[RMDB]
RNA sequence: GGGAACGACUCGAGUAGAGUCGAAAAGAUCGUCUCUUCGGAGACGAUCAAAUAAAUCACAGGAUACGGCCAAAAGAGAAAAUCUCACCUGUGAAAAGGCCGAAACCCUCUGCUUCGGCAGAGGGAACCCACUUAUAUUGUUCGCAAUAUAAGUGGGAAAAGAAACAACAACAACAAC
Reactivity to 2A3 in 0.01 (KOAc 150mM, MgCl2 10mM, bicine 150mM(pH8.5), 24C), signal-to-noise 6, nucleotides 027 to 126: g000a010u000c000g000u000c010u000c000u020u070c240g080g000a000g000a000c000g000a000u000c000a000a000a000u000a000a010a020u070c010a000c000a000g030g030a100u120a240c030g010g000c000c000a020a030a070a010g050a020g030a070a290a200a290u060c010u000c000a030c010c000u020g000u000g030a090a060a000a000g010g000c010c000g020a080a070a070c000c000c000u000c000u010g010c000u030u050c260g110g000c000a000g000a000g000g010g000a000a000
Reactivity to DMS in 0.01 (KOAc 150mM, MgCl2 10mM, bicine 150mM(pH8.5), 24C), signal-to-noise 3, nucleotides 027 to 126: g000a020u000c000g030u000c000u000c000u000u010c240g010g010a040g020a000c010g000a000u000c010a020a040a090u010a030a120a110u010c010a010c000a010g010g010a300u010a070c060g020g000c010c020a050a050a110a050g000a030g010a120a060a130a130u000c000u000c010a230c000c010u000g000u000g000a050a060a080a170g000g010c000c000g010a090a080a080c000c010c000u000c000u000g010c010u000u010c200g000g010c010a010g000a010g020g000g010a010a020
This 177-nucleotide RNA was probed chemically with 2A3 and DMS. For 2A3, 11,624 sequencing reads were counted. The reactions ran in a buffer of 150 mM KOAc, 10 mM MgCl2 and 150 mM bicine (pH 8.5), at 24 C.